This 177-nucleotide RNA was probed chemically with 2A3. Values are in units of 0.01, from 0 to 300, in steps of 10.

RNA sequence: GGGAACGACUCGAGUAGAGUCGAAAACAGUGAUGGAAACAUCACUGAAAAACGUGGCAGCGCUCCACGAAAAAGUCGAUCGAAUACCGAUCGACAAGCGCUAAAGUCAUGCCGAAAGGCAUGACAAGCUAUCGGGAGGCUUCGGCCUCCCGAUAGCAAAAGAAACAACAACAACAAC
Reactivity to 2A3 in 0.01 (KOAc 150mM, MgCl2 10mM, bicine 150mM(pH8.5), 24C), signal-to-noise 1, nucleotides 027 to 126: c000a000g020u000g000a010u000g000g060a030a020a000c000a000u000c000a000c000u000g010a080a000a000a000a000c010g000u000g000g000c020a040g000c010g000c000u050c000c000a000c030g090a110a080a030a000a000g010u010c000g000a000u000c000g000a030a060u070a300c100c000g000a000u040c000g000a000c000a000a000g010c010g000c010u000a000a000a000g000u000c000a000u010g000c010c000g050a090a000a010g000g000c000a000u000g010a000c000a000a040

Record summary
The reactions ran in a buffer of 150 mM KOAc, 10 mM MgCl2 and 150 mM bicine (pH 8.5), at 24 C.